[RMDB]
Notes: An RNA of 177 nucleotides, treated with DMS and 2A3 and read out base by base. 2A3 adducts were read by reverse transcription with SuperScript II with manganese. The 2A3 profile rests on 3,896 reads. Reactivities are rounded to 0.1 and cut off at 0 and 3. The reactions ran in a buffer of 150 mM KOAc, 10 mM MgCl2 and 150 mM bicine (pH 8.5), at 24 C.
RNA sequence: GGGAACGACUCGAGUAGAGUCGAAAACCCGAAUCGUUCGCGAUUCGGGAAAGGCAUCAGUCGCCAGCCAAGAUGCCAAAAUUAAAGAAAAGGUAGGCGACAAAACCCAGGACUUCGGUCCUGGGAAGCUUAACAACUACUUCGGUAGUUGUUAAGCAAAAGAAACAACAACAACAAC
Reactivity to DMS in 0.01 (KOAc 150mM, MgCl2 10mM, bicine 150mM(pH8.5), 24C), signal-to-noise 2, nucleotides 027 to 126: c000c000c000g020a000a010u010c000g050u010u020c200g030c000g020a020u000u010c020g030g000g020a000a040a040g000g000c000a070u000c020a080g000u020c020g010c000c000a270g040c010c010a110a080g030a050u000g030c000c000a030a060a080a140u000u000a080a070a140g020a080a040a180a100g000g000u000a120g000g010c000g020a020c010a130a070a070a150c000c000c000a000g010g030a020c000u000u030c230g020g010u010c000c000u000g000g000g020a020a010
Reactivity to 2A3 in 0.01 (KOAc 150mM, MgCl2 10mM, bicine 150mM(pH8.5), 24C), signal-to-noise 2, nucleotides 027 to 126: c000c000c000g010a000a000u010c000g040u080u060c230g010c000g100a000u000u010c000g010g000g030a070a030a010g010g000c000a000u010c020a060g010u010c000g000c020c010a020g040c000c010a070a030g020a020u010g010c010c000a040a160a030a000u070u070a040a020a030g060a040a150a010a000g000g030u090a050g010g010c000g000a000c010a010a060a000a000c000c000c010a000g000g000a000c000u030u160c300g130g000u010c000c010u000g000g000g000a020a010